[RMDB]
RNA sequence: GGGAACGACUCGAGUAGAGUCGAAAACGAACAGAGGAGUCUCUACCUCGGAGGAGAAAGACCGUAGCGAUGGGGGAGAUGCUAGGAGUAGGCGGCGACCGAAGCGAGGAGGAAAGCAAAGAAAGCCAGGGCUGUAUCUUCGGAUACAGCAAAAGAAACAACAACAACAAC
Reactivity to 2A3 in 0.01 (KOAc 150mM, MgCl2 10mM, bicine 150mM(pH8.5), 24C), signal-to-noise 9, nucleotides 027 to 129: c050g050a030a010c030a020g060a020g060g010a020g060u020c010u010c020u130a160c000c010u020c030g020g010a020g010g020a040g040a020a060a010g060a020c010c040g070u080a010g030c050g050a080u140g010g000g000g020g000a020g000a010u090g020c040u040a010g010g020a010g010u110a030g030g040c030g000g000c040g040a030c000c010g010a020a010g030c040g020a040g000g010a000g000g000a050a020a000g020c060a060a040a010g060a030a040a000g030c030c040a050g030g060
Reactivity to DMS in 0.01 (KOAc 150mM, MgCl2 10mM, bicine 150mM(pH8.5), 24C), signal-to-noise 8, nucleotides 027 to 129: c060g020a050a030c140a020g030a000g040g000a060g000u000c060u000c060u010a120c000c000u000c040g010g010a070g040g010a050g000a000a050a070g010a000c030c050g040u030a060g020c200g000a030u020g020g040g030g010g030a010g030a070u010g040c060u040a030g030g010a010g040u040a040g020g040c020g000g030c100g030a020c040c030g000a030a020g000c150g020a050g000g000a030g010g000a020a000a060g010c170a050a030a070g030a070a070a090g000c050c090a100g020g020
Annotation:
This 170-nucleotide RNA was probed chemically with 2A3 and DMS. The 2A3 profile rests on 39,629 reads. It was measured as part of the RMDB library 15KLIB. Conditions: 150 mM KOAc, 10 mM MgCl2 and 150 mM bicine (pH 8.5), 24 C. For DMS the reverse transcriptase was MarathonRT. Values cover nucleotides 27 to 129.